[RMDB]
RNA sequence: GGGAACGACUCGAGUAGAGUCGAAAACUUUCUGAGACAAAGGAUCCACUCCACAUCCAGCCACACCUAAAGAAAUGCUUUGAAGGAAUUGCCAAGCUCACUUUUAAUCAUGAGAAAGAAAUUACCCGAGUGCGAGUUUGUUCGCAAACUCGCACUCAAAAGAAACAACAACAACAAC
Reactivity to 2A3 in 0.01 (KOAc 150mM, MgCl2 10mM, bicine 150mM(pH8.5), 24C), signal-to-noise 1, nucleotides 027 to 126: c000u000u060u000c080u080g080a020g060a020c200a140a090a090g050g090a030u000c000c000a040c070u000c010c010a030c000a000u040c000c000a020g010c030c000a060c030a030c000c020u000a000a000a170g030a000a060a010u180g030c090u000u010u130g020a040a060g130g000a200a050u080u170g060c000c000a030a000g030c010u010c000a000c060u150u050u070u130a000a030u200c000a090u060g090a070g030a070a030a000g040a000a150a000u110u060a090c020c000c000